[RMDB]
Chemical mapping of a 177-nucleotide RNA with DMS and 2A3. For 2A3 the reverse transcriptase was SuperScript II with manganese. Reactivities are given for positions 27 through 126. The reactions ran in a buffer of 150 mM KOAc, 10 mM MgCl2 and 150 mM bicine (pH 8.5), at 24 C. The 2A3 profile rests on 3,010 reads. The DMS profile rests on 4,404 reads.
RNA sequence: GGGAACGACUCGAGUAGAGUCGAAAAGAGUGCCUAGGCGGAGUCGAUCGGCGAUCCAGCGAUCCAAGGUUCCCGCUCGGACUAUAAAAAGCUUGGGCGGCACCGUUGCGGAAGGCAGUUAACUCCACAUUUAGCUGCACUUCGGUGCAGCUAAAUGAAAAGAAACAACAACAACAAC
Reactivity to DMS in 0.01 (KOAc 150mM, MgCl2 10mM, bicine 150mM(pH8.5), 24C), signal-to-noise 4, nucleotides 027 to 126: g020a110g010u010g020c000c030u010a130g000g010c050g020g000a060g050u020c090g010a040u000c030g000g020c090g070a100u010c090c070a150g000c060g030a040u020c060c070a100a120g010g000u020u020c180c000c000g010c020u000c030g000g000a080c020u000a090u030a050a140a070a160a040g010c020u010u020g030g000g000c020g020g000c300a040c010c000g000u020u050g000c100g060g020a100a080g000g000c060a040g030u020u010a050a110c080u010c030c050a170
Reactivity to 2A3 in 0.01 (KOAc 150mM, MgCl2 10mM, bicine 150mM(pH8.5), 24C), signal-to-noise 2, nucleotides 027 to 126: g080a020g100u100g020c010c000u050a050g000g060c020g010g020a080g100u080c010g040a050u020c030g080g060c050g080a060u050c050c040a050g030c040g050a020u020c010c020a090a050g050g000u040u030c000c000c000g010c020u010c010g040g040a060c010u040a060u120a180a140a040a010a000g040c040u120u170g040g000g010c010g000g000c020a000c010c010g100u080u100g010c010g040g060a050a040g080g000c030a000g000u060u080a050a030c020u020c030c010a040